[RMDB]
RNA sequence: GGGAACGACUCGAGUAGAGUCGAAAAGAAAGAAGGAACCCUUCCCGCGGGGCUGGAUCUUCCAGAUGGUGCGGGCCGGGACAAGCCGGAGAGUGUCCCGGUUUCAGAAACAACCUUCGGCAGCCAAACUAGACUACCCACUUCGGUGGGUAGUCAACAUCUGUCACAUGUUCGCAUGUGACAGAUGAAAAGAAACAACAACAACAAC
Reactivity to 2A3 in 0.01 (KOAc 150mM, MgCl2 10mM, bicine 150mM(pH8.5), 24C), signal-to-noise 1, nucleotides 027 to 156: g040a000a060a010g030a000a000g000g000a080a070c000c000c000u000u000c010c000c010g010c020g010g000g000g020c000u000g010g030a130u110c110u140u050c090c000a020g000a000u010g030g220u090g020c010g010g010g000c020c000g000g000g000a020c030a040a010g140c080c080g070g030a100g010a030g050u010g000u000c000c000c000g000g000u020u060u000c010a000g070a020a040a040c030a030a020c000c010u000u000c000g000g000c030a040g040c030c020a050a050a050c060u090a050g010a010c000u030a000c000c000c020a000c050u050u050c200g110g000u000g010g020g000u000a000g000u000c000a000a000
This 207-nucleotide RNA was probed chemically with 2A3.
For 2A3 the reverse transcriptase was SuperScript II with manganese.
The data come from the RNA Mapping Database (RMDB), library M2RFPK.
The reactions ran in a buffer of 150 mM KOAc, 10 mM MgCl2 and 150 mM bicine (pH 8.5), at 24 C.
The 2A3 profile rests on 1,011 reads.